About this RNA: The record gives the reactivity of an RNA of 177 nucleotides to DMS and 2A3. The RNA was probed in 150 mM KOAc, 10 mM MgCl2 and 150 mM bicine (pH 8.5) at 24 C. For DMS the reverse transcriptase was MarathonRT.

RNA sequence: GGGAACGACUCGAGUAGAGUCGAAAACUCAUUCACGGUUAGGUCUGUCUCUGGCAGAGCAGACUGUCAGGAGGAAGAGGUCACCAUCUUCACGAAGCCAAAGCCAAAUUCCGCCUUGUCCUGUAAAGAUUUAAAUGAGCUUCGGCUCAUUUAAAUCAAAAGAAACAACAACAACAAC
Reactivity to DMS in 0.01 (KOAc 150mM, MgCl2 10mM, bicine 150mM(pH8.5), 24C), signal-to-noise 4, nucleotides 027 to 126: c020u010c010a090u040u000c090a060c100g030g000u000u040a060g000g010u010c020u000g010u030c000u000c020u010g020g000c130a080g010a030g000c040a050g010a050c010u030g000u010c060a080g010g020a110g000g000a050a040g010a050g000g000u010c050a080c070c060a110u000c010u000u010c050a110c070g000a070a060g000c050c040a070a100a110g010c030c050a040a100a120u000u000c010c030g020c030c010u000u010g000u030c020c000u000g010u020a100a060a040
Reactivity to 2A3 in 0.01 (KOAc 150mM, MgCl2 10mM, bicine 150mM(pH8.5), 24C), signal-to-noise 8, nucleotides 027 to 126: c020u010c010a100u180u110c060a050c100g090g010u070u150a040g010g020u010c010u020g110u100c010u010c010u080g160g000c050a010g020a020g000c020a010g000a060c010u010g020u010c020a030g030g070a040g010g020a050a040g020a030g030g040u060c010a050c080c010a090u040c020u090u080c030a040c070g040a040a000g020c010c020a090a020a010g040c010c010a050a080a060u060u000c010c010g000c020c000u030u040g030u040c000c000u030g070u200a090a080a030